[RMDB]
RNA sequence: GGGAACGACUCGAGUAGAGUCGAAAAGGGUGGUAGUUGCCUGCGGAAUUCGUCAGGCCCGCGUGGAAGUGGAACGCUUUGGCGGUGUAGUGCCAGAGCGAGCGCACGGCGUCGGGCAGCGGAACAAUCCGUUCACUGAAUUCGUUCAGUGAACGGAAAAAGAAACAACAACAACAAC
Reactivity to 2A3 in 0.01 (KOAc 150mM, MgCl2 10mM, bicine 150mM(pH8.5), 24C), signal-to-noise 1, nucleotides 027 to 126: g060g040g010u050g020g110u060a070g060u110u160g040c000c000u040g050c030g090g080a120a250u060u070c010g040u030c090a060g150g000c000c000c020g010c020g030u020g030g120a200a160g020u020g010g040a160a030c000g000c000u030u020u000g020g000c000g030g100u220g040u180a100g130u140g070c040c000a000g000a000g000c000g000a020g000c050g000c010a030c000g050g050c000g040u230c070g060g000g010c020a020g010c000g000g040a030a030c010a050a060
Reactivity to DMS in 0.01 (KOAc 150mM, MgCl2 10mM, bicine 150mM(pH8.5), 24C), signal-to-noise 2, nucleotides 027 to 126: g010g020g020u010g000g000u010a050g020u000u010g040c050c010u000g040c090g000g000a090a170u010u000c020g000u010c060a200g000g020c000c040c020g030c050g010u010g000g000a100a070g030u000g020g000a100a190c020g010c000u000u000u000g000g020c000g020g020u010g000u000a140g020u010g000c010c010a020g000a010g000c010g000a010g020c070g010c040a080c000g010g000c020g000u000c020g010g010g010c010a110g020c020g010g000a060a100c170a100a110